[RMDB]
RNA sequence: GGGAACGACUCGAGUAGAGUCGAAAAGUUUUACUCUAAGAUAUCUCUACCUCUGACUUUCCACAGUCAGUUCUGGGCUUUACUCUCCCAGAGUGGAACUAAAAGAUGUUAGCAGAGAAGCAGCGAGAUCCCACAAUUUCUUCGGAAAUUGUGGGAUAAAAGAAACAACAACAACAAC
Reactivity to DMS in 0.01 (KOAc 150mM, MgCl2 10mM, bicine 150mM(pH8.5), 24C), signal-to-noise 1, nucleotides 027 to 126: g020u000u010u000u000a110c010u000c040u020a190a220g000a050u000a110u000c020u000c010u000a060c050c020u000c000u000g000a110c110u010u000u020c070c110a040c130a100g000u030c110a140g000u020u000c020u000g000g000g000c260u000u000u010a050c190u010c090u000c000c000c000a040g010a070g030u000g000g000a030a040c160u000a010a080a120a090g000a030u010g010u000u000a090g070c080a010g000a050g070a100a060g000c050a040g030c040g000a090g000